RNA sequence: GGGAACGACUCGAGUAGAGUCGAAAAGAUAUGGAAUAAGACAUGUUAUUUAACUAGCUCGUUGAAAUCGCUCGGAAACGAGCGAUGGAGAGCAAAAGUUAAAUAACAACAGCUUAUUCCUAAGUCAGAGAUUAGAUAACUUCGGUUAUCUAAUCUCAAAAGAAACAACAACAACAAC
Reactivity to 2A3 in 0.01 (KOAc 150mM, MgCl2 10mM, bicine 150mM(pH8.5), 24C), signal-to-noise 2, nucleotides 027 to 126: g000a010u090a070u230g020g000a010a000u000a000a000g070a080c060a110u070g000u010u030a000u010u000u000a040a020c000u030a020g030c010u000c030g260u300u050g000a050a040a000u020c010g020c000u000c020g050g030a110a140a150c020g000a010g060c020g000a000u000g000g000a020g010a000g030c000a040a300a000a000g000u010u000a000a000a000u010a000a020c010a000a010c000a020g040c010u000u040a000u010u000c000c010u010a170a000g040u000c060a050
Reactivity to DMS in 0.01 (KOAc 150mM, MgCl2 10mM, bicine 150mM(pH8.5), 24C), signal-to-noise 3, nucleotides 027 to 126: g010a070u010a300u000g010g000a040a010u000a010a000g010a070c100a270u010g010u000u000a010u000u000u000a000a000c020u000a300g030c010u010c000g000u000u000g010a160a120a000u000c000g000c010u000c000g010g010a130a080a220c000g010a030g030c020g010a010u000g000g010a070g000a000g000c010a010a030a080a000g000u000u000a000a010a000u000a000a020c000a010a050c300a180g010c000u000u000a000u000u000c000c000u010a040a130g010u000c040a150